[RMDB]
RNA sequence: GGGAACGACUCGAGUAGAGUCGAAAAAGGGUUGACCCGUCACUCCAAAGGUAAUAUUUUUCAGAGUAAAUAUUCAGAAGAGAAAUGUCAAAGAAGGUGCUCAACUUUCAUCUCAACGGUUCGACAAUCUGCCUUCCGUUCCUUUUCAAUGAGGAGGUAGUAAAACCGGAUUCGUCCGGUUUUACUAAAAAGAAACAACAACAACAAC
Reactivity to 2A3 in 0.01 (KOAc 150mM, MgCl2 10mM, bicine 150mM(pH8.5), 24C), signal-to-noise 3, nucleotides 027 to 156: a000g030g000g010u050u030g020a030c010c010c000g060u040c030a000c020u000c020c030a090a080a070g070g020u120a120a050u020a170u070u050u020u080u160c090a060g040a030g150u140a040a050a060u060a040u050u090c070a020g050a170a000g030a070g040a060a180a030u130g090u100c040a120a100a000g050a040a000g070g010u020g010c060u040c060a000a010c000u030u060u080c040a090u000c020u030c040a050a070c050g060g020u040u050c000g030a010c040a060a090u040c030u050g010c000c000u010u040c010c010g070u010u000c000c000u000u020u040u190c100a170a130u130g010a030g030g010a000g080g000
Reactivity to DMS in 0.01 (KOAc 150mM, MgCl2 10mM, bicine 150mM(pH8.5), 24C), signal-to-noise 2, nucleotides 027 to 156: a050g020g010g020u000u010g010a180c060c030c020g000u000c030a050c000u000c040c010a060a140a140g010g020u000a040a020u000a030u000u000u000u010u020c050a290g010a300g010u000a050a030a010u010a040u000u000c060a110g010a130a100g010a090g010a020a030a060u010g010u000c020a000a050a100g000a060a040g020g010u000g040c080u000c050a060a030c030u000u000u000c050a120u010c050u010c020a040a120c050g000g000u000u000c030g030a060c050a050a050u010c040u000g020c030c060u000u010c030c010g010u000u000c000c030u000u000u000u000c060a030a080u020g000a130g030g000a020g000g020
Structure probing data (2A3 and DMS) for a 207-nucleotide construct. It was measured as part of the RMDB library OK3TST. For 2A3, 1,273 sequencing reads were counted. The RNA was probed in 150 mM KOAc, 10 mM MgCl2 and 150 mM bicine (pH 8.5) at 24 C. 2A3 adducts were read by reverse transcription with SuperScript II with manganese.